[RMDB]
This 207-nucleotide RNA was probed chemically with 2A3. The 2A3 profile rests on 916 reads.
RNA sequence: GGGAACGACUCGAGUAGAGUCGAAAAGGGGUCUUCGACAUGGUUGAAACAGGAGCAACAGCGUGCCUGAAGCCUCCACGGGCACGACAUGCUCCUGGAGUACGACCAACAGCGAAGACGGAGGCACCCAAAAGUGGCAGUACUUCGGUACUGCCACCAUAGCUGUGUCCUUCGGGACACAGCUAUGAAAAGAAACAACAACAACAAC
Reactivity to 2A3 in 0.01 (KOAc 150mM, MgCl2 10mM, bicine 150mM(pH8.5), 24C), signal-to-noise 1, nucleotides 027 to 156: g010g020g080g010u000c060u010u020c040g070a110c110a200u130g040g010u010u070g110a040a020a000c000a000g000g030a000g000c020a040a160c050a150g010c030g000u000g000c000c000u070g060a100a020g010c020c020u010c040c020a010c000g000g010g030c020a000c000g040a050c000a060u100g000c000u000c000c000u010g010g000a000g020u040a030c180g020a000c000c010a030a040c070a020g120c000g010a040a000g000a000c000g000g000a010g000g010c000a060c000c000c000a010a160a090a000g000u000g000g020c000a000g000u050a000c040u130u200c300g090g000u000a000c000u000g010c000c000a000c000